Overview: This 177-nucleotide RNA was probed chemically with 2A3. Reactivities are rounded to 0.1 and cut off at 0 and 3. The reactions ran in a buffer of 150 mM KOAc, 10 mM MgCl2 and 150 mM bicine (pH 8.5), at 24 C. 2A3 adducts were read by reverse transcription with SuperScript II with manganese.

[RMDB]
RNA sequence: GGGAACGACUCGAGUAGAGUCGAAAACGGGCUAACCCCAUGCAUCUCCAUGGCAGUGCUCAACUGGACCUCUGAUUUUUGUGUCCUGAUCGAGUUAUGGCCCAGAGUAACUUACCAUGAGCCUGAGAGCUUUUGGCCGUUUCGACGGCCAAAAGCUAAAAGAAACAACAACAACAAC
Reactivity to 2A3 in 0.01 (KOAc 150mM, MgCl2 10mM, bicine 150mM(pH8.5), 24C), signal-to-noise 1, nucleotides 027 to 126: c030g060g040g000c010u000a100a100c120c010c000c000a060u130g010c000a200u120c000u020c020c000a030u000g000g000c010a000g090u080g130c000u000c000a140a080c160u160g000g070a000c000c040u180c010u300g150a280u100u180u260u080u050g220u040g000u110c000c000u150g000a220u100c070g000a000g000u000u280a000u070g060g000c000c000c000a000g000a000g000u090a090a120c070u000u070a000c000c000a010u040g000a000g000c020c020u160g130a090g000